[RMDB]
RNA sequence: GGGAACGACUCGAGUAGAGUCGAAAAACCUUAUUCUGAGAAGCUGAGGGAUUUGGCCCAUAGAAGCUUCAGCAACCGACUUUAAAUAGCACGGUGCUAAUACCAACGAGCAACUCGAAUGAUAAGUAAAACGUUGACAAGUUCGCUUGUCAACGAACUUUUAAAGAUAGUUCGCUAUCUUUAAAAGAAAAGAAACAACAACAACAAC
Reactivity to 2A3 in 0.01 (KOAc 150mM, MgCl2 10mM, bicine 150mM(pH8.5), 24C), signal-to-noise 3, nucleotides 027 to 156: a010c030c000u030u120a180u140u080c060u110g070a030g010a060a000g000c000u010g030a020g020g000g000a000u000u020u050g010g000c000c010c000a090u200a080g040a000a000g010c000u000u000c000a000g020c000a000a030c000c000g020a000c010u090u100u200a110a250a300u160a160g000c010a000c040g000g000u010g000c000u010a040a020u030a060c010c000a010a050c050g040a040g080c090a120a100c060u030c060g070a060a090u060g040a030u060a160a000g060u100a060a130a080a050c000g000u000u000g000a000c000a000a000g020u030u050c110g050c110u000u000g000u000c000a000a000c000g000a000a000
Reactivity to DMS in 0.01 (KOAc 150mM, MgCl2 10mM, bicine 150mM(pH8.5), 24C), signal-to-noise 2, nucleotides 027 to 156: a130c030c010u000u020a070u030u020c050u020g020a160g000a090a250g030c060u010g030a150g010g020g000a190u010u000u000g040g030c010c000c000a160u010a190g010a060a070g000c000u000u000c020a020g020c020a020a040c020c010g030a130c010u000u000u000a080a110a130u000a030g050c020a020c000g000g010u010g030c000u000a050a040u010a090c010c010a080a080c070g020a090g020c010a110a180c030u000c050g020a080a100u000g010a050u000a020a070g000u000a040a060a110a140c000g020u020u000g030a010c040a030a010g030u000u000c300g050c000u000u000g010u000c010a000a010c000g010a020a000